[RMDB]
RNA sequence: GGGAACGACUCGAGUAGAGUCGAAAAACUGACACCGCCGCUGGUGAUGAUCAGGUCGGCGUCCACCGCGUACCGGUCAAGGAUCGCGCCGAACUGCGCGACGUCGUCGCCGGCGGUUGCGGUGGCGCAAGCAUUGAGGGUUCGCCCUCAAUGCUUGAAAAGAAACAACAACAACAAC
Reactivity to DMS in 0.01 (KOAc 150mM, MgCl2 10mM, bicine 150mM(pH8.5), 24C), signal-to-noise 5, nucleotides 027 to 126: a070c040u010g000a070c030a020c050c000g050c010c000g080c030u030g010g030u000g000a010u020g010a040u010c060a030g010g000u010c010g000g010c010g010u020c040c040a100c030c010g000c140g000u040a190c100c010g000g000u030c120a200a140g010g000a140u020c160g010c000g000c000c090g000a060a090c080u020g000c230g010c050g030a040c190g010u000c030g020u010c160g010c010c010g010g020c040g010g010u010u010g010c020g010g000u000g000g020c090g020
Reactivity to 2A3 in 0.01 (KOAc 150mM, MgCl2 10mM, bicine 150mM(pH8.5), 24C), signal-to-noise 8, nucleotides 027 to 126: a000c040u040g040a020c010a000c010c010g030c010c000g040c040u040g010g010u020g000a020u010g010a020u110c030a010g000g040u020c010g010g010c000g080u150c000c000a030c010c020g040c090g060u110a140c060c010g010g050u110c110a090a070g040g000a070u050c060g000c000g020c020c020g040a030a050c050u070g010c120g040c060g140a090c100g050u020c000g010u000c010g010c010c000g000g000c010g010g000u010u050g000c020g000g010u000g010g000c020g000